Description:
Structure probing data (DMS and 2A3) for a 177-nucleotide construct. It was measured as part of the RMDB library M2PK50. Reactivities are given for positions 27 through 126. Conditions: 150 mM KOAc, 10 mM MgCl2 and 150 mM bicine (pH 8.5), 24 C.

RNA sequence: GGGAACGACUCGAGUAGAGUCGAAAAGGCCUGACGUUCGCGUCAGGCCAAACCUGGAGGAGGAUGGAACACUGGGGGGAGCCGAUACCCAGGUCAGGGCAGAAACUGUCCCGUUCGCGGGACAGAACAGUAACAUAACCUUCGGGUUAUGUUACUGAAAAGAAACAACAACAACAAC
Reactivity to DMS in 0.01 (KOAc 150mM, MgCl2 10mM, bicine 150mM(pH8.5), 24C), signal-to-noise 5, nucleotides 027 to 126: g010g010c010c000u000g010a010c010g020u010u030c210g030c010g030u010c000a010g010g010c000c000a000a040a050c020c020u000g010g010a070g000g010a070g010g000a070u010g000g010a100a070c090a040c090u000g010g010g010g010g010g010a100g010c060c030g000a130u000a090c040c010c010a070g010g020u000c050a060g000g000g010c120a090g000a070a090a160c010u000g000u000c000c000c000g010u000u010c160g020c010g010g010g000a000c010a000g000a070a110
Reactivity to 2A3 in 0.01 (KOAc 150mM, MgCl2 10mM, bicine 150mM(pH8.5), 24C), signal-to-noise 2, nucleotides 027 to 126: g020g000c000c000u010g020a000c010g020u050u080c300g000c020g090u000c010a000g030g000c010c000a000a000a000c000c010u020g020g030a040g030g020a020g030g010a050u080g020g050a120a030c080a040c200u090g010g000g010g000g000g040a000g000c000c000g030a060u120a090c030c020c010a000g000g040u030c020a010g010g000g000c030a000g090a040a110a030c000u000g000u000c000c010c000g010u000u020c080g000c000g050g010g000a000c000a000g000a000a000